[RMDB]
RNA sequence: GGGAACGACUCGAGUAGAGUCGAAAAGUCGUGUCCUUCGGGACACGACAAACAUGGUAAACGCCGACACCAUGAAAGAUCGAAAAACGAUCAAGGGGUAAAAAAGUCUAACCUUCGGGUUAGACAAUCAACAGGAUAACUUCGGUUAUCCUGUUGAAAAAGAAACAACAACAACAAC
Reactivity to DMS in 0.01 (KOAc 150mM, MgCl2 10mM, bicine 150mM(pH8.5), 24C), signal-to-noise 2, nucleotides 027 to 126: g020u000c000g030u000g000u020c000c010u000u000c130g010g010g000a000c010a040c000g010a000c000a000a040a140c030a000u000g020g010u020a050a090a080c100g020c090c100g020a210c300a020c000c000a010u000g000a220a110a170g000a010u020c010g010a080a060a070a130a280c030g000a000u000c010a120a090g000g000g000g020u010a010a050a070a130a040a060g000u010c000u010a000a010c010c010u000u030c140g040g000g010u000u010a010g010a010c010a000a020
Reactivity to 2A3 in 0.01 (KOAc 150mM, MgCl2 10mM, bicine 150mM(pH8.5), 24C), signal-to-noise 1, nucleotides 027 to 126: g000u000c000g000u000g000u000c000c020u000u060c180g090g000g010a000c000a000c000g000a000c010a010a010a000c010a000u000g000g010u100a000a060a070c040g090c180c000g040a050c000a000c060c000a010u000g030a140a060a040g000a030u000c000g020a060a000a080a000a300c000g000a000u000c010a010a070g120g000g030g030u100a150a080a030a000a080a000g000u020c000u000a000a010c000c030u020u020c200g000g000g000u000u000a000g010a000c000a000a000